[RMDB]
RNA sequence: GGGAACGACUCGAGUAGAGUCGAAAACGACCGCAGUUCGCUGCGGUCGAAAAGAACUGACAACCGUUCGCCUAGCCGGUGUCAGUUUAAGGGCGGAGAUUAAAACCCUGACGUUCGCGUCAGGGAAGAAAAUCGGGGACUUCGGUCCCCGAUUUUCAAAAGAAACAACAACAACAAC
Reactivity to DMS in 0.01 (KOAc 150mM, MgCl2 10mM, bicine 150mM(pH8.5), 24C), signal-to-noise 1, nucleotides 027 to 126: c040g020a000c000c000g000c010a010g000u010u030c180g020c020u020g050c020g000g000u010c000g030a010a020a120a210g000a020a040c000u010g000a000c020a080a100c010c030g000u010u000c110g020c120c070u000a120g040c300c010g010g020u000g000u000c010a000g010u000u010u000a030a100g000g000g010c040g020g000a160g000a130u000u020a010a080a170a140c010c000c000u000g010a010c010g010u000u020c240g070c050g000u000c000a000g000g020g020a010a020